[RMDB]
RNA sequence: GGGAACGACUCGAGUAGAGUCGAAAAUCAGUGUACAAAUUUGGAAGGGAGACGUUGCCUGAUUCAAUGAGAAGUAGAGUGGGGUCAACAGAGAGUGCAUUAAUUUGUUUUGCUUAUGGUUUAAAACCAGUAGUUGAUGAUGUGGAUAUAGGGUCAGGUCACCUUAGGAUUUCGAUCCUAAGGUGACAAAAGAAACAACAACAACAAC
Reactivity to 2A3 in 0.01 (KOAc 150mM, MgCl2 10mM, bicine 150mM(pH8.5), 24C), signal-to-noise 2, nucleotides 027 to 156: u070c030a030g050u030g030u050a100c090a140a230a200u120u140u090g060g000a070a000g060g000g000a040g000a040c010g040u050u030g030c010c020u120g010a090u110u020c020a050a060u100g010a020g000a200a020g040u120a030g010a020g030u040g000g000g030g000u030c080a060a000c060a020g060a000g010a000g070u050g000c000a010u030u080a140a100u090u080u080g040u020u070u040u060g000c010u040u090a050u080g050g000u030u080u170a030a090a050a040c020c030a030g020u080a020g010u040u070g020a060u010g010a010u080g040u060g050g030a000u070a030u110a170g050g030g030u040c030a000g000